An RNA of 177 nucleotides, treated with 2A3 and DMS and read out base by base. The 2A3 profile rests on 17,584 reads. 2A3 adducts were read by reverse transcription with SuperScript II with manganese. The DMS profile rests on 5,554 reads. It was measured as part of the RMDB library OK1LIB. For DMS the reverse transcriptase was MarathonRT.

[RMDB]
RNA sequence: GGGAACGACUCGAGUAGAGUCGAAAAUAACGCCACAACCGCCAGCACGGCGCCCAGCGCAAAGGGAAUACGCCAUCCCCAGGCACGAAGCUCAGCAUCGUCCAGAACCUGCUGCAAAAUCACAACGCCUCAUCAUUUAGUUCGCUAAAUGAUGAGGAAAAGAAACAACAACAACAAC
Reactivity to 2A3 in 0.01 (KOAc 150mM, MgCl2 10mM, bicine 150mM(pH8.5), 24C), signal-to-noise 9, nucleotides 027 to 126: u090a040a020c030g020c020c010a060c020a050a050c030c020g030c010c000a030g030c030a040c070g040g000c010g040c000c010c010a050g030c050g010c070a040a030a040g050g020g040a060a060u110a120c060g020c020c000a050u060c020c000c010c000a010g020g000c030a010c060g030a040a010g010c010u020c060a020g010c000a040u050c020g050u020c020c010a020g020a040a040c010c020u030g010c000u020g010c020a030a030a020a110u130c040a040c030a140a080c070g020
Reactivity to DMS in 0.01 (KOAc 150mM, MgCl2 10mM, bicine 150mM(pH8.5), 24C), signal-to-noise 4, nucleotides 027 to 126: u020a060a170c110g000c000c040a060c100a130a080c120c000g000c030c000a070g000c050a100c070g000g020c020g000c060c000c070a050g000c100g020c060a070a090a070g000g020g010a110a050u030a090c090g000c040c040a090u000c040c000c010c000a120g000g000c060a060c060g020a060a090g000c020u020c030a070g010c030a060u020c030g000u010c010c040a060g020a070a090c030c020u000g020c030u000g010c080a030a040a050a050u010c100a040c090a110a090c260g010